Chemical mapping of a 177-nucleotide RNA with 2A3. The RNA was probed in 150 mM KOAc, 10 mM MgCl2 and 150 mM bicine (pH 8.5) at 24 C.
[RMDB]
RNA sequence: GGGAACGACUCGAGUAGAGUCGAAAAUCUUAAUUGAAAAGAAACCGAGUUUCAAAUCCUGAUGAAGACGGUUGCUUUCUCCGCCCGGAGAGCGUUUCGAUUGAACGGCAGGAGAGAGUUCCAGAAGGGAGUAUGGCUUUUUCGAAAGCCAUACUCCAAAAGAAACAACAACAACAAC
Reactivity to 2A3 in 0.01 (KOAc 150mM, MgCl2 10mM, bicine 150mM(pH8.5), 24C), signal-to-noise 2, nucleotides 027 to 126: u020c000u010u010a150a110u230u090g070a010a050a080a120g000a000a040a000c040c000g040a120g050u000u020u000c100a150a150a010u070c050c100u270g040a220u050g020a080a000g070a000c020g000g000u070u010g000c000u000u000u000c010u000c000c000g020c050c000c000g030g100a030g050a010g050c010g130u130u220u240c040g110a160u000u040g050a020a020c060g020g000c220a300g000g000a000g000a000g000a000g030u020u000c010c030a120g120a130a020g130